This 177-nucleotide RNA was probed chemically with 2A3 and DMS. It was measured as part of the RMDB library M2PK50. For 2A3 the reverse transcriptase was SuperScript II with manganese. The RNA was probed in 150 mM KOAc, 10 mM MgCl2 and 150 mM bicine (pH 8.5) at 24 C. Reactivities are rounded to 0.1 and cut off at 0 and 3. High DMS reactivity at an A or C suggests that its Watson-Crick edge is free.
RNA sequence: GGGAACGACUCGAGUAGAGUCGAAAAGGAUGCUCGUUCGCGAGCAUCCACUGAGAUAGCCACUAUUAAGAUUAAGUCUUCCUACUCGAGACAGGAUGUCUAUGCUCCUGGCCUUCGGGCCAGGAAACCUGAAAGAUGUAUUCGUACAUCUUUCAGGAAAAGAAACAACAACAACAAC
Reactivity to 2A3 in 0.01 (KOAc 150mM, MgCl2 10mM, bicine 150mM(pH8.5), 24C), signal-to-noise 7, nucleotides 027 to 126: g000g000a000u010g000c000u000c010g030u050u080c260g010c010g090a000g010c000a000u000c000c000a000c000u060g020a030g010a030u050a020g110c120c070a150c130u080a060u160u070a070a040g040a130u120u120a130a090g100u010c000u010u010c000c000u000a010c000u000c010g020a030g050a080c060a030g120g040a100u130g050u050c010u070a120u130g090c010u020c000c000u000g010g000c000c000u010u040c200g050g000g000c000c000a000g000g000a000a000a010
Reactivity to DMS in 0.01 (KOAc 150mM, MgCl2 10mM, bicine 150mM(pH8.5), 24C), signal-to-noise 5, nucleotides 027 to 126: g000g000a010u000g010c010u000c000g030u010u010c230g030c020g010a010g030c000a000u000c000c000a030c120u010g010a140g010a030u000a040g010c090c110a080c110u000a050u000u000a050a070g010a080u000u010a110a150g010u000c010u000u000c040c000u000a010c010u000c020g010a020g010a090c090a100g000g010a110u010g010u000c040u000a100u010g010c130u000c000c000u000g000g000c010c000u000u010c180g030g010g000c010c000a000g000g010a000a010a060